RNA sequence: GGGAACGACUCGAGUAGAGUCGAAAAGAUAUGGAGCCUGUCUAGAACUACGGCAUCGGAAACGAUGUUCGCUAGACAUCAGGGCUCCUAAGUCAAAGACUCGCCAUGCUUCGGCAUGGCGAGUCAACUAUUUAGACGAGUUCGCUCGUCUAAAUAGAAAAGAAACAACAACAACAAC
Reactivity to DMS in 0.01 (KOAc 150mM, MgCl2 10mM, bicine 150mM(pH8.5), 24C), signal-to-noise 2, nucleotides 027 to 126: g000a030u000a300u000g010g010a020g020c010c000u000g030u000c010u000a030g010a140a080c190u010a260c130g000g000c000a000u000c000g000g000a110a070a220c030g000a000u000g000u000u010c020g010c010u020a000g020a000c000a110u020c200a140g010g020g000c000u020c000c000u000a020a030g030u000c060a110a140a090g000a000c000u010c000g020c000c000a040u000g030c000u000u030c190g030g000c010a000u000g000g000c000g000a010g010u000c000a000a130

Structure probing data (DMS) for a 177-nucleotide construct. The DMS profile rests on 1,726 reads.